[RMDB]
RNA sequence: GGGAACGACUCGAGUAGAGUCGAAAAGAUAUGGAGCGUUAUGCCAUCGAUCGUACUGGGUCGGAAACGACCUUACGGGAGGCAUGACGCUCCUAAGUCGCAAAAGAUCCCGCUUCGGCGGGAUCAACAGACGAUUGUAGUUCGCUACAAUCGUCUGAAAAGAAACAACAACAACAAC
Reactivity to DMS in 0.01 (KOAc 150mM, MgCl2 10mM, bicine 150mM(pH8.5), 24C), signal-to-noise 2, nucleotides 027 to 126: g000a030u000a010u020g000g000a020g010c000g020u000u000a010u010g010c000c010a300u000c150g000a040u010c030g000u000a010c300u010g020g000g000u000c010g020g010a010a010a030c010g000a020c000c010u010u000a000c000g000g000g010a020g030g040c000a010u000g000a010c000g010c010u010c000c000u000a000a050g000u000c000g000c240a130a130a140a130g000a000u010c000c000c000g010c000u010u030c220g030g020c000g030g000g000a010u010c000a030a140